[RMDB]
RNA sequence: GGGAACGACUCGAGUAGAGUCGAAAAGAUAUGGAGCAGGUGGACAUGAUUAGUCGGAAACGAUGGGAUCAACAGCCACUGCUCCUAAGUCAAAAGCGUUUCAGUACCUUCGGGUACUGAAACGCAACUGAUUAGCACACUUCGGUGUGCUAAUCAGAAAAGAAACAACAACAACAAC
Reactivity to DMS in 0.01 (KOAc 150mM, MgCl2 10mM, bicine 150mM(pH8.5), 24C), signal-to-noise 2, nucleotides 027 to 126: g000a050u000a300u000g010g000a030g010c000a030g030g020u010g010g000a010c160a220u010g000a000u000u020a300g010u010c000g000g010a130a050a120c010g010a010u010g000g010g010a020u000c020a050a110c250a110g000c000c000a030c000u000g000c000u000c000c010u000a000a100g000u010c020a100a010a130a130g010c000g000u000u000u000c000a000g000u000a030c000c010u000u000c210g020g000g000u000a000c000u010g000a000a000a010c000g000c000a010a060
Reactivity to 2A3 in 0.01 (KOAc 150mM, MgCl2 10mM, bicine 150mM(pH8.5), 24C), signal-to-noise 2, nucleotides 027 to 126: g000a000u050a010u100g010g000a040g030c000a050g160g300u120g120g000a100c060a240u040g000a030u030u000a020g030u000c000g030g080a040a030a010c040g010a010u030g300g300g000a030u020c040a040a280c050a140g020c010c000a010c030u000g000c000u030c000c000u000a020a000g020u000c050a000a030a040a190g010c000g020u000u000u000c000a000g010u020a000c000c000u020u170c300g130g000g000u030a000c000u000g000a000a000a030c010g000c000a000a000

Source information: This 177-nucleotide RNA was probed chemically with DMS and 2A3. The reactions ran in a buffer of 150 mM KOAc, 10 mM MgCl2 and 150 mM bicine (pH 8.5), at 24 C. The 2A3 profile rests on 2,438 reads. Source: RMDB library TTRDEL, as collected in RNAgym. High 2A3 reactivity points to a flexible backbone, as in loops and unpaired stretches.